RNA sequence: GGGAACGACUCGAGUAGAGUCGAAAACGGAACAGGGUCCGCACGCCGAGCGCGUCGACGUGUUUGCCCAGGAUCCCCAGACAGGCCGGCAACACGGUGAUAGACAGGAUGGCCGACAGCAUCACCGUCCUACCCUCGCAUUCGUGCGAGGGUAGGAAAAAGAAACAACAACAACAAC
Reactivity to DMS in 0.01 (KOAc 150mM, MgCl2 10mM, bicine 150mM(pH8.5), 24C), signal-to-noise 1, nucleotides 027 to 126: c130g000g040a100a120c170a130g030g000g000u010c050c020g000c070a040c090g000c010c000g000a050g000c120g020c100g030u010c030g000a060c000g030u030g000u000u000u010g000c000c010c040a170g050g010a160u000c020c020c060c030a090g030a150c050a120g000g000c000c000g000g050c130a010a040c050a100c060g000g000u000g000a010u000a070g090a100c130a120g000g010a140u000g030g040c020c000g000a060c130a160g000c050a060u010c070a060c050c000g040